Annotation:
Structure probing data (2A3 and DMS) for a 177-nucleotide construct. For 2A3 the reverse transcriptase was SuperScript II with manganese. The DMS profile rests on 14,472 reads. It was measured as part of the RMDB library OK2TRN. Conditions: 150 mM KOAc, 10 mM MgCl2 and 150 mM bicine (pH 8.5), 24 C.

[RMDB]
RNA sequence: GGGAACGACUCGAGUAGAGUCGAAAAGCAUCGGCGCUAAAGUGUACAUUGCCGAGAGACUGGCAGCGUUAAGCAGGACUGCGAAGACUAGUCAGCAUGUCACAUCGGACAAGGAAGUCACGCAGGACUGCAUAGCUAGUUUCGACUAGCUAUGCAGAAAAGAAACAACAACAACAAC
Reactivity to 2A3 in 0.01 (KOAc 150mM, MgCl2 10mM, bicine 150mM(pH8.5), 24C), signal-to-noise 7, nucleotides 027 to 126: g040c010a040u050c050g030g000c030g000c070u110a110a090a080g130u100g050u130a050c060a160u080u170g000c020c010g040a040g000a010g010a070c060u070g020g020c010a020g020c040g060u070u080a060a020g010c030a030g020g100a030c010u020g000c010g030a200a020g000a030c020u030a030g100u060c010a030g090c030a060u080g030u070c020a020c020a300u150c140g100g000a020c020a050a010g090g010a050a010g000u010c000a000c030g000c010a000g000g060a030
Reactivity to DMS in 0.01 (KOAc 150mM, MgCl2 10mM, bicine 150mM(pH8.5), 24C), signal-to-noise 9, nucleotides 027 to 126: g010c060a110u010c040g000g010c030g010c080u000a080a080a100g010u010g010u000a080c130a100u000u000g020c010c020g010a090g000a120g010a100c050u000g010g010c040a080g010c080g010u000u000a070a130g020c050a060g010g010a100c020u000g010c020g020a120a100g010a030c020u000a090g010u000c050a120g020c110a100u000g000u010c060a080c140a110u010c180g000g010a020c020a060a110g010g010a080a050g000u010c010a160c030g010c020a030g010g000a160